Structure probing data (DMS and 2A3) for a 207-nucleotide construct. The RNA was probed in 150 mM KOAc, 10 mM MgCl2 and 150 mM bicine (pH 8.5) at 24 C. The data come from the RNA Mapping Database (RMDB), library RNAMAK. 2A3 is a SHAPE reagent: it acylates the 2'-hydroxyl of flexible nucleotides of all four kinds.
RNA sequence: GGGAACGACUCGAGUAGAGUCGAAAACCCGAUUUCGAUCGGGACUUUUCCUAAGUCAGACUGGAGCCUACACGCGAGCAUCGAUCUCUUCGGAAACGAAGAGGGAGCUCGUAGGCGAUGAAAGUCUGAUAUGGAUACAGAUUGGCUUCGGCCAAAAGUAUUAAACUGUAUUCGUACAGUUUAAUACAAAAGAAACAACAACAACAAC
Reactivity to DMS in 0.01 (KOAc 150mM, MgCl2 10mM, bicine 150mM(pH8.5), 24C), signal-to-noise 3, nucleotides 027 to 156: c000c000c020g010a010u000u000u000c230g020a080u010c010g030g020g000a100c070u000u010u000u000c000c010u010a110a270g020u000c010a010g010a060c010u000g010g010a300g000c000c020u000a060c080a170c210g070c100g000a010g050c000a220u000c160g000a080u010c000u000c000u040u000c000g000g010a190a150a290c010g010a000a020g020a010g000g000g000a070g020c020u000c010g010u000a010g010g030c000g010a070u000g010a160a110a090g010u000c010u000g010a020u000a100u000g000g020a150u010a150c060a040g020a180u000u010g010g000c030u010u010c190g020g000c020c020a020a040a070a220
Reactivity to 2A3 in 0.01 (KOAc 150mM, MgCl2 10mM, bicine 150mM(pH8.5), 24C), signal-to-noise 8, nucleotides 027 to 156: c000c000c000g010a010u090u150u140c220g080a020u000c000g000g010g070a080c010u130u150u090u030c010c000u040a130a050g020u000c000a000g000a010c000u010g030g000a000g000c010c000u070a060c120a040c210g180c060g010a020g000c010a160u300c030g050a050u000c010u000c010u010u010c010g050g010a100a080a070c010g000a000a010g000a000g000g000g000a010g000c000u000c010g000u010a000g000g000c010g010a020u000g010a000a010a000g000u000c000u000g000a000u000a030u030g040g010a020u070a170c080a110g260a250u060u060g010g000c020u100u110c250g130g000c000c010a010a080a030a030